[RMDB]
RNA sequence: GGGAACGACUCGAGUAGAGUCGAAAAGGAGAGUCCCGCUCCUUCAGGUGAACGAUCUCGGUUAUUUCUCUGAAGGCAUGAUCACCCCGUCCGAUGCGGAAGUUCGUGCUUCCGUCGAACGCGAAAGUAAAACCCUAAAGCUUCGGCUUUAGGGUAAGUAGUUAGAGUUGUUCGCAACUCUAACUACAAAAGAAACAACAACAACAAC
Reactivity to DMS in 0.01 (KOAc 150mM, MgCl2 10mM, bicine 150mM(pH8.5), 24C), signal-to-noise 2, nucleotides 027 to 156: g020g010a110g010a130g000u010c030c020c010g020c060u000c010c000u000u010c030a040g020g020u040g010a050a040c080g000a040u000c030u000c210g050g000u010u000a060u000u000u030c010u000c010u020g000a090a030g010g000c090a060u020g000a080u000c060a190c030c020c040c020g030u000c000c030g030a140u000g010c000g000g020a050a160g020u000u010c270g060u010g020c010u010u010c000c020g020u010c000g010a040a030c040g020c020g010a120a050a110g020u000a040a040a110a060c000c000c010u000a000a010a030g000c000u000u000c300g040g030c000u000u000u010a000g020g010g030u000a000a010
Reactivity to 2A3 in 0.01 (KOAc 150mM, MgCl2 10mM, bicine 150mM(pH8.5), 24C), signal-to-noise 3, nucleotides 027 to 156: g080g040a000g020a010g060u000c000c000c020g010c030u020c000c000u020u030c010a030g090g060u160g120a090a010c070g080a130u060c080u140c180g090g000u130u170a100u060u090u010c020u000c000u010g020a040a010g010g000c020a060u100g020a060u130c070a070c000c010c010c000g010u040c020c000g020a080u120g050c010g010g030a010a000g020u100u280c130g090u270g100c000u000u000c010c000g000u020c010g010a020a010c020g000c030g070a080a030a020g070u120a040a080a060a040c000c010c000u000a000a000a000g010c000u030u110c200g050g040c000u000u000u000a010g000g000g000u000a000a000
An RNA of 207 nucleotides, treated with DMS and 2A3 and read out base by base. The 2A3 profile rests on 1,358 reads. Reactivities are given for positions 27 through 156. The DMS profile rests on 3,846 reads. Reactivities are rounded to 0.1 and cut off at 0 and 3. Source: RMDB library M2RFPK, as collected in RNAgym.